Source information:
Structure probing data (2A3 and DMS) for a 177-nucleotide construct. DMS adducts were read by reverse transcription with MarathonRT.
RNA sequence: GGGAACGACUCGAGUAGAGUCGAAAAAUCGAAUACUUCGGUAUUCGAUCAAGGGCUGUUUUUCUCGCUGACUUUCAGCCCCAAACAAAAAAUGUCAGCAUAUUCCAUACUCAUUCGUGAGUAUGAACGCUAUGGUUCUAUUCGUAGAACCAUAGCGAAAAGAAACAACAACAACAAC
Reactivity to 2A3 in 0.01 (KOAc 150mM, MgCl2 10mM, bicine 150mM(pH8.5), 24C), signal-to-noise 1, nucleotides 027 to 126: a000u010c000g000a000a010u010a000c000u030u040c110g070g000u000a000u010u010c010g010a010u030c010a110a140g030g000g000c000u010g010u000u020u000u000u000c070u030c080g020c000u000g000a000c000u000u020u000c010a000g000c000c000c010c110a020a000a000c000a000a010a000a010a000a000u100g000u010c000a000g000c000a000u010a000u000u010c020c010a010u000a000c000u000c010a010u020u060c200g080u020g020a000g010u000a000u010g000a020a020
Reactivity to DMS in 0.01 (KOAc 150mM, MgCl2 10mM, bicine 150mM(pH8.5), 24C), signal-to-noise 1, nucleotides 027 to 126: a020u000c000g000a070a010u000a010c000u010u000c130g050g020u000a000u000u000c000g000a000u000c100a050a090g010g010g020c020u010g010u000u000u000u000u000c060u000c270g000c000u000g020a010c000u000u000u000c030a010g000c020c000c000c090a000a000a290c030a010a010a010a010a010a010u020g030u000c000a000g000c000a020u010a010u000u000c130c000a020u000a000c000u000c000a030u000u000c130g050u000g000a000g020u010a000u000g000a070a070